[RMDB]
RNA sequence: GGGAACGACUCGAGUAGAGUCGAAAAAGUUCUAGUCCUCACCUAAGAUCAGACUUACAAGGCCCUCAAAGUAAGAGCACUGGGUUGGGCUUUGUGGUGGGGAUAAGUGUCUCAUUUUUAGUCCCAAAUUAAAAACGAGAUUUUGGGCUGUACAUCAUAUUUACGUACGUUUCGACGUACGUAAAUAAAAAGAAACAACAACAACAAC
Reactivity to 2A3 in 0.01 (KOAc 150mM, MgCl2 10mM, bicine 150mM(pH8.5), 24C), signal-to-noise 2, nucleotides 027 to 156: a000g060u090u030c010u040a030g060u020c000c000u000c000a010c000c020u080a070a050g030a090u140c070a060g080a200c050u070u090a030c020a010a000g000g010c000c000c010u050c040a150a110a020g030u140a100a040g030a050g150c030a000c050u030g120g000g000u060u060g000g000g000c000u000u000u010g050u020g000g000u010g000g000g020g000a000u040a030a030g020u020g060u030c000u030c040a120u000u160u090u060u110a010g090u120c030c000c000a050a030a030u090u060a080a010a030a020a030c130g030a080g000a140u030u000u020u060g000g010g010c050u030g040u090a060c030a070u080c030a040
Reactivity to DMS in 0.01 (KOAc 150mM, MgCl2 10mM, bicine 150mM(pH8.5), 24C), signal-to-noise 2, nucleotides 027 to 156: a100g010u010u000c070u000a220g030u000c000c010u000c020a040c030c010u020a050a070g000a090u010c050a130g020a140c050u010u010a180c060a080a060g000g020c010c010c060u010c070a120a110a130g000u000a070a110g000a130g030c060a060c040u000g000g000g000u000u000g010g010g010c020u000u000u010g030u000g020g030u000g010g020g020g000a020u000a010a120g020u000g010u000c010u020c020a010u010u000u000u000u000a060g030u010c010c090c110a060a050a090u020u010a020a030a020a030a060c040g010a050g010a110u000u000u000u000g020g030g010c100u000g010u000a050c120a130u010c060a270

Structure probing data (2A3 and DMS) for a 207-nucleotide construct. The RNA was probed in 150 mM KOAc, 10 mM MgCl2 and 150 mM bicine (pH 8.5) at 24 C. It was measured as part of the RMDB library OK3TST.